The record gives the reactivity of an RNA of 207 nucleotides to 2A3 and DMS.

RNA sequence: GGGAACGACUCGAGUAGAGUCGAAAACAAAUGGAAUAACAUUUUUUGUGUGCAUUCUUUCAGCAUAAUUAUCUUGAGAUUCACACGUAUUGUAUGUAUCAAUAGUUCAUGCACAUUUUUAGGUUUAGUCGUAUUCCCUUGCAUGGAUAUACAAGUAAUGGGUGAUUAUAUUCGUAUAAUCACCCAUAAAAGAAACAACAACAACAAC
Reactivity to 2A3 in 0.01 (KOAc 150mM, MgCl2 10mM, bicine 150mM(pH8.5), 24C), signal-to-noise 5, nucleotides 027 to 156: c040a000a070a030u150g060g040a060a130u160a150a020c050a090u040u020u030u020u180u230g030u000g000u010g020c030a020u080u030c000u030u080u040c060a010g010c010a050u080a170a200u300u220a090u080c040u020u060g020a010g000a020u040u030c020a010c010a010c010g030u080a050u080u080g030u020a060u060g060u030a050u090c090a090a110u050a110g040u010u010c000a010u010g030c020a030c030a090u030u040u040u100u160a090g060g060u050u060u130a030g020u040c030g000u000a100u020u050c010c000c000u020u020g000c010a010u010g000g000a000u020a020u070a070c080a040a020g130u210a110
Reactivity to DMS in 0.01 (KOAc 150mM, MgCl2 10mM, bicine 150mM(pH8.5), 24C), signal-to-noise 4, nucleotides 027 to 156: c060a080a070a060u000g010g010a170a110u000a090a120c020a030u000u000u000u000u000u000g030u010g030u000g010c040a070u000u000c030u000u010u000c120a110g000c090a100u010a080a110u010u010a040u010c040u000u000g010a260g010a110u000u000c030a030c010a030c040g020u000a090u000u010g020u000a040u010g010u010a110u010c020a060a120u000a070g010u000u000c060a030u000g000c000a060c110a080u000u000u000u000u000a070g020g010u010u010u000a100g010u000c080g010u000a140u010u000c010c010c020u010u000g010c020a070u010g000g010a090u000a140u010a090c060a030a070g010u010a070
The RNA was probed in 150 mM KOAc, 10 mM MgCl2 and 150 mM bicine (pH 8.5) at 24 C.